RNA sequence: GGGAACGACUCGAGUAGAGUCGAAAAUUGAUAAUCAUCAUACGCGUAUCAGUACUCGUCCUCAUAAAGAACACUGCAGCCAUUUUCUAUGAACAAAUCAAUAAUUUCAGGAACAGGAUCAUCUGUCAUUACAUAAUUUUCUAUAACUGAACGAUGGCACAUUCGUCCUAUUCGUAGGACGAAUGUGAAAAGAAACAACAACAACAAC
Reactivity to DMS in 0.01 (KOAc 150mM, MgCl2 10mM, bicine 150mM(pH8.5), 24C), signal-to-noise 2, nucleotides 027 to 156: u010u030g010a070u000a120a120u010c040a130u010c060a140u010a050c050g000c100g000u020a090u000c020a130g000u000a050c050u000c040g010u010c030c030u010c050a100u000a090a100a170g010a100a040c030a060c050u010g000c040a060g020c030c050a240u000u000u000u000c050u000a120u020g000a100a210c090a080a010a110u030c030a100a120u010a050a100u010u010u010c050a090g050g000a120a070c050a020g000g010a050u000c060a060u000c030u000g060u000c040a080u000u040a060c060a090u020a070a100u010u000u010u030c040u000a060u010a070a070c040u000g010a050a030c060g000a090u010g060g010
Reactivity to 2A3 in 0.01 (KOAc 150mM, MgCl2 10mM, bicine 150mM(pH8.5), 24C), signal-to-noise 5, nucleotides 027 to 156: u060u030g030a040u070a190a100u090c030a010u010c030a010u090a170c040g010c020g020u060a050u060c050a010g040u040a050c040u010c060g040u050c010c000u060c040a050u140a100a060a020g030a060a020c050a010c080u060g010c040a000g010c010c010a030u070u060u020u070c050u080a140u120g040a080a050c030a010a080a060u150c020a000a040u100a090a090u050u110u070c020a010g030g060a070a060c030a060g060g010a070u060c020a020u040c030u040g080u040c030a040u060u120a040c020a040u110a050a090u110u090u090u000c050u080a110u030a150a110c020u050g020a040a000c050g050a040u040g030g020
Overview:
Chemical mapping of a 207-nucleotide RNA with DMS and 2A3. The data come from the RNA Mapping Database (RMDB), library OK3TST. For DMS the reverse transcriptase was MarathonRT. The 2A3 profile rests on 2,764 reads. The reactions ran in a buffer of 150 mM KOAc, 10 mM MgCl2 and 150 mM bicine (pH 8.5), at 24 C. For 2A3 the reverse transcriptase was SuperScript II with manganese.